Background: The record gives the reactivity of an RNA of 177 nucleotides to DMS. DMS (dimethyl sulfate) methylates the pairing face of unpaired adenines and cytosines.
[RMDB]
RNA sequence: GGGAACGACUCGAGUAGAGUCGAAAAUUAUGCCAUUUGGUAUCUGACACAUAAUCAUUUCUCUGAUUAUGUGUCUCGAAACAUGGCAGAAAGUGAGGGGGAACGGUCCUUGCGACACUGGUUGCUACUACAAGUGCCUGUUCGCAGGCACUUGUAGAAAAGAAACAACAACAACAAC
Reactivity to DMS in 0.01 (KOAc 150mM, MgCl2 10mM, bicine 150mM(pH8.5), 24C), signal-to-noise 1, nucleotides 027 to 126: u000u010a090u000g010c000c000a050u010u050u010g020g040u010a090u000c000u000g000a010c000a000c000a000u000a010a000u010c000a070u010u020u000c220u000c200u000g020a000u010u010a020u010g020u000g010u000c000u010c110g000a080a100a040c110a050u000g010g010c010a010g000a040a130a130g010u010g000a120g010g010g000g010g000a090a140c190g030g020u010c020c080u000u010g010c070g000a050c060a090c110u000g000g010u000u000g000c010u000a120
DMS adducts were read by reverse transcription with MarathonRT. The reactions ran in a buffer of 150 mM KOAc, 10 mM MgCl2 and 150 mM bicine (pH 8.5), at 24 C.